[RMDB]
Source information: Source: RMDB library OK1LIB, as collected in RNAgym. An RNA of 177 nucleotides, treated with 2A3 and DMS and read out base by base. For DMS, 1,319 sequencing reads were counted. Reactivities are given for positions 27 through 126. The 2A3 profile rests on 1,114 reads. 2A3 adducts were read by reverse transcription with SuperScript II with manganese. The reactions ran in a buffer of 150 mM KOAc, 10 mM MgCl2 and 150 mM bicine (pH 8.5), at 24 C.
RNA sequence: GGGAACGACUCGAGUAGAGUCGAAAAUUACAUAAGUCUAACACCUUGUUUCGGACUAACAAGGCCGAAUGGAGGAUGGCCGACCCUCCAUAGUUAGACGUCCGAGAACCAGCCGAAAUGAAAAAGACAUCCACCUCAUGUUCGCAUGAGGUGGAUGAAAAGAAACAACAACAACAAC
Reactivity to 2A3 in 0.01 (KOAc 150mM, MgCl2 10mM, bicine 150mM(pH8.5), 24C), signal-to-noise 2, nucleotides 027 to 126: u140u100a030c090a070u120a050a060g020u000c020u010a000a000c010a020c010c000u020u000g090u010u100u080c130g090g100a060c050u000a050a000c000a000a010g000g000c020c070g110a070a010u020g000g000a000g000g080a020u040g050g050c060c080g000a040c000c000c000u000c000c000a000u000a000g000u000u000a010g000a000c010g020u030c040c030g070a120g010a040a070c010c000a010g070c000c050g070a100a080a190u130g060a080a010a080a000a000g120a060
Reactivity to DMS in 0.01 (KOAc 150mM, MgCl2 10mM, bicine 150mM(pH8.5), 24C), signal-to-noise 2, nucleotides 027 to 126: u000u060a190c130a120u060a040a110g000u010c000u000a000a000c010a300c030c000u020u000g000u000u020u000c040g020g000a170c120u010a160a070c010a020a000g000g000c270c080g140a160a120u000g000g000a000g040g000a110u000g010g030c040c000g000a040c130c010c000u000c000c000a030u010a130g000u000u000a010g010a050c020g010u000c200c000g040a130g050a000a120c060c070a130g000c030c030g030a110a080a080u010g040a060a000a070a130a020g000a170